[RMDB]
RNA sequence: GGGAACGACUCGAGUAGAGUCGAAAAUCACUUUGGGACGCUUAGAAUUUGAGCGGCAAAAUUUUGAGGUAAGGAAUUAAAUGACGAACUGGUCGUGGCUCAAUUCAAUAUCAUUGAUGUCGUUUUUAAGAGUGAGUUCGAAAAAGAGUGGUCCUGGCUAGAUUGAGAUGUUCGCGUCUUAGUCUAGAAAAGAAACAACAACAACAAC
Reactivity to 2A3 in 0.01 (KOAc 150mM, MgCl2 10mM, bicine 150mM(pH8.5), 24C), signal-to-noise 4, nucleotides 027 to 156: u020c000a000c000u040u010u040g030g000g010a010c010g000c040u030u060a050g030a080a080u100u090u130g010a000g000c000g020g000c010a000a020a040a080u100u160u080u150g030a030g040g050u080a050a020g050g020a010a020u060u020a070a010a060u110g020a010c010g010a070a070c030u060g030g030u030c010g010u010g040g000c010u000c020a010a020u050u030c010a020a050u070a060u170c050a040u010u100g020a010u040g050u050c010g000u010u010u010u020u050a030a010g010a000g010u020g000a020g010u020u010c000g030a020a000a000a000a000g020a000g000u020g000g000u000c000c010u000g020g000
Reactivity to DMS in 0.01 (KOAc 150mM, MgCl2 10mM, bicine 150mM(pH8.5), 24C), signal-to-noise 5, nucleotides 027 to 156: u000c020a030c050u000u000u010g020g020g020a040c020g010c020u010u000a090g010a120a120u000u000u010g010a030g020c000g020g000c030a070a060a100a150u000u000u000u000g020a100g020g020u010a100a130g010g000a070a090u010u000a050a040a080u010g010a110c040g020a060a090c080u000g030g020u000c070g020u000g020g000c030u000c020a030a080u000u000c030a060a110u000a110u000c060a110u000u000g010a100u010g020u000c010g020u000u000u000u000u000a050a130g010a090g020u000g000a080g000u000u000c030g010a050a050a010a010a110g000a080g010u000g010g020u000c010c020u000g020g000
The data come from the RNA Mapping Database (RMDB), library OK3TST. Chemical mapping of a 207-nucleotide RNA with 2A3 and DMS. For 2A3 the reverse transcriptase was SuperScript II with manganese. High DMS reactivity at an A or C suggests that its Watson-Crick edge is free. Values cover nucleotides 27 to 156.